[RMDB]
RNA sequence: GGGAACGACUCGAGUAGAGUCGAAAACGACGAAGGGGUGCAUUCCGAAGAGCUGGCCUGGCGUCGUCCGGCUCCCUCGACCGCACCGGAGCGCUAGAAAAGGUCCUCGGACUUUCUUCUAUCUCCGCAUAUACGGGAUCUUCGGAUCCCGUAUAUGAAAAGAAACAACAACAACAAC
Reactivity to DMS in 0.01 (KOAc 150mM, MgCl2 10mM, bicine 150mM(pH8.5), 24C), signal-to-noise 1, nucleotides 027 to 126: c040g000a040c040g000a130a080g000g030g020g010u000g000c070a120u000u010c090c040g000a140a070g010a070g010c080u010g010g020c060c030u000g000g020c030g000u000c030g000u010c110c020g010g000c020u000c020c110c000u000c030g000a080c070c020g020c160a150c100c030g000g000a030g000c020g010c010u000a010g000a020a040a040a010g000g000u000c000c010u020c300g020g010a010c000u000u000u000c160u000u000c000u000a000u000c000u000c010c010g020
Reactivity to 2A3 in 0.01 (KOAc 150mM, MgCl2 10mM, bicine 150mM(pH8.5), 24C), signal-to-noise 1, nucleotides 027 to 126: c010g060a010c020g030a070a010g080g050g010g050u100g040c010a060u170u160c040c030g130a140a020g030a000g070c060u060g060g060c000c020u010g090g040c030g020u050c020g010u000c010c010g000g000c010u020c000c000c010u070c010g040a060c010c050g080c000a050c010c050g000g000a010g090c040g020c050u000a000g000a000a010a000a010g030g010u030c000c020u070c150g050g020a000c000u040u060u060c050u050u000c000u060a160u300c020u000c020c020g000